[RMDB]
RNA sequence: GGGAACGACUCGAGUAGAGUCGAAAACGCUCGUUAAACCACUGGAACACUACAAACGCCAACGACGAGCGUUUCGCUCUCGCCGCUUAAGCGGUGAGCCGCUGCACUGAUCUGUCCUUGGGUCAGGCGGAGGAAGGCAACUUCCCAGGGGGGCAACGAUCAGCAAAACGUUCGCGUUUUGCUGAUCAAAAGAAACAACAACAACAAC
Reactivity to 2A3 in 0.01 (KOAc 150mM, MgCl2 10mM, bicine 150mM(pH8.5), 24C), signal-to-noise 2, nucleotides 027 to 156: c000g000c000u000c000g040u000u060a140a170a100c070c030a080c130u030g020g070a150a050c020a040c130u270a090c270a100a140a020c140g010c020c010a030a040c080g010a000c000g000a010g000c000g020u000u000u000c010g000c010u010c000u000c000g000c020c000g000c060u300u300a300a030g000c020g000g000u000g000a000g000c010c000g000c000u030g000c060a120c300u010g000a010u000c020u000g230u240c090c090u060u250g000g000g000u010c000a030g000g000c000g000g020a010g000g020a060a000g070g000c010a080a060c040u000u000c020c000c000a000g000g000g010g000g000g000c010a030a000c090
Record summary:
Structure probing data (2A3) for a 207-nucleotide construct. The RNA was probed in 150 mM KOAc, 10 mM MgCl2 and 150 mM bicine (pH 8.5) at 24 C.